[RMDB]
RNA sequence: GGGAACGACUCGAGUAGAGUCGAAAAGGCAGCGAAUUCGUUCGCUGCCAAUACAGGACGUGGAGCCGGCUUCUCGGCGCACGUCGAUGACGCCCGGGCCGGAGAAUCCAGAUUUCGAUCUGGAUAAUACCAUGGAAAAUUUCGAUUUUCCAUGGUAAAAAGAAACAACAACAACAAC
Reactivity to DMS in 0.01 (KOAc 150mM, MgCl2 10mM, bicine 150mM(pH8.5), 24C), signal-to-noise 6, nucleotides 027 to 126: g010g010c010a010g010c000g010a020a020u000u010c210g010u000u000c000g010c000u000g000c000c010a010a020u000a120c140a090g010g000a030c020g010u000g000g010a230g030c010c010g020g000c300u010u010c140u000c020g010g010c020g020c010a010c010g000u000c020g000a050u000g010a160c140g000c010c020c060g020g000g000c010c030g010g010a110g000a130a060u000c000c000a010g010a020u000u000u020c210g010a020u000c000u000g000g000a010u000a040a140
Reactivity to 2A3 in 0.01 (KOAc 150mM, MgCl2 10mM, bicine 150mM(pH8.5), 24C), signal-to-noise 3, nucleotides 027 to 126: g010g000c010a000g000c000g010a010a020u090u090c170g060u110u000c000g010c000u010g000c010c000a000a000u010a000c000a020g120g020a000c000g000u020g010g050a060g020c010c010g020g020c110u300u150c190u070c060g020g000c000g000c000a010c010g010u010c000g010a070u040g050a010c060g030c020c000c010g030g020g000c020c020g060g040a050g070a050a030u000c010c000a000g010a010u050u060u130c130g050a020u000c000u000g000g020a000u000a000a010